[RMDB]
RNA sequence: GGGAACGACUCGAGUAGAGUCGAAAAGAUAUGGAUAUCCAAUGCUCAACAGCUAGCUCGGAAACGAGCUAGACAUGAGCCGCUUGGAGUAUCCUAAGUCAAAGCCGAGGACUUCGGUCCUCGGCAAGUAUGGUUCGUAGUUCGCUACGAACCAUACAAAAGAAACAACAACAACAAC
Reactivity to 2A3 in 0.01 (KOAc 150mM, MgCl2 10mM, bicine 150mM(pH8.5), 24C), signal-to-noise 1, nucleotides 027 to 126: g010a000u120a040u230g000g000a010u010a010u020c020c020a000a030u300g010c010u000c020a070a140c010a270g040c000u000a000g030c000u000c040g090g000a040a110a090c000g020a020g040c000u000a000g010a010c020a180u060g010a010g000c000c020g050c000u000u000g000g070a050g100u040a000u000c000c000u000a120a020g060u040c030a170a200a000g000c010c000g010a000g000g050a010c030u120u110c300g070g010u000c030c010u010c000g000g030c010a000a000
Reactivity to DMS in 0.01 (KOAc 150mM, MgCl2 10mM, bicine 150mM(pH8.5), 24C), signal-to-noise 2, nucleotides 027 to 126: g000a100u010a300u000g000g000a010u020a070u000c010c020a290a010u010g000c000u000c010a060a130c300a210g000c000u000a000g010c010u020c010g000g010a110a160a190c000g020a000g000c000u020a000g030a020c060a270u010g000a010g020c000c050g000c060u000u000g000g010a070g000u000a020u000c000c000u000a020a150g000u020c020a110a190a110g000c000c000g020a000g000g000a020c000u010u010c170g070g030u000c000c000u000c010g010g010c000a010a030